[RMDB]
RNA sequence: GGGAACGACUCGAGUAGAGUCGAAAACUCCGUCCCUAUCCUUCUUUCCGAUUAUUCCUUUGAUGUUCCCCAGCCAGGGAUUUUCAUCCUCGAGCUUCUUAAUUUUCUUCUUGGCCUUCCGGAGCUCCACCUACGUCCUUCGGGACGUAGAAAAGAAACAACAACAACAAC
Reactivity to 2A3 in 0.01 (KOAc 150mM, MgCl2 10mM, bicine 150mM(pH8.5), 24C), signal-to-noise 6, nucleotides 027 to 129: c010u010c000c040g040u010c010c010c000u060a200u100c000c000u040u060c000u030u060u010c040c010g070a070u050u040a050u060u130c040c000u120u080u170g140a090u180g050u020u010c000c000c010c000a010g000c020c010a020g070g010g010a030u060u040u040u090c050a030u010c000c000u030c040g020a040g020c000u050u030c020u080u210a180a190u090u070u040u050c010u060u010c010u020u060g030g000c010c000u030u010c010c020g000g000a000g000c000u010c010c000a050c000
Reactivity to DMS in 0.01 (KOAc 150mM, MgCl2 10mM, bicine 150mM(pH8.5), 24C), signal-to-noise 5, nucleotides 027 to 129: c120u010c030c060g020u030c030c020c030u020a180u010c060c000u040u020c050u010u050u020c020c040g000a150u020u020a160u010u000c050c030u010u080u030g070a120u030g010u060u020c010c000c000c040a020g040c040c020a200g040g030g000a060u010u030u030u000c090a050u000c030c030u000c000g020a160g070c070u000u000c050u120u030a100a050u060u070u020u000c010u040u020c060u020u020g020g030c060c030u010u050c030c040g050g020a080g020c000u000c020c010a020c050